This 177-nucleotide RNA was probed chemically with DMS and 2A3. The data come from the RNA Mapping Database (RMDB), library OK1LIB. Reactivities are given for positions 27 through 126. For DMS, 3,164 sequencing reads were counted. For DMS the reverse transcriptase was MarathonRT. Reactivities are rounded to 0.1 and cut off at 0 and 3.
[RMDB]
RNA sequence: GGGAACGACUCGAGUAGAGUCGAAAAAUAUUCGGCGCAGAGAGGCGUUCAUACGCGUUCGAUGACCUCGGUGCCGGCCGCCGUAAUCGGCGACUUAUUUCGUGGGCGGGUGCGCAGUGGGCGGCGGUAGUUAGCGUGGUUUCGACCACGCUAACUAAAAAGAAACAACAACAACAAC
Reactivity to DMS in 0.01 (KOAc 150mM, MgCl2 10mM, bicine 150mM(pH8.5), 24C), signal-to-noise 2, nucleotides 027 to 126: a070u030a020u000u000c000g000g030c000g050c010a070g010a110g000a050g010g000c150g000u020u020c130a080u040a090c070g000c080g040u030u030c040g000a070u020g000a150c010c020u000c030g010g000u010g000c040c010g010g030c100c000g000c000c040g000u020a100a100u010c030g000g030c000g010a020c200u030u050a060u030u000u030c050g000u000g020g010g000c060g010g000g020u010g000c180g000c070a050g020u000g000g000g020c080g000g010c070g000g010
Reactivity to 2A3 in 0.01 (KOAc 150mM, MgCl2 10mM, bicine 150mM(pH8.5), 24C), signal-to-noise 3, nucleotides 027 to 126: a000u200a150u070u050c010g020g000c010g000c050a030g080a000g000a010g200g030c000g010u050u110c030a010u120a100c130g040c040g040u090u230c000g050a040u110g110a160c010c000u000c000g000g000u010g010c010c000g010g000c010c000g020c000c000g070u100a030a160u120c020g020g010c010g000a000c010u120u040a160u250u210u140c050g000u050g020g000g100c100g020g000g040u060g060c060g030c020a040g070u100g000g020g020c020g020g000c000g000g010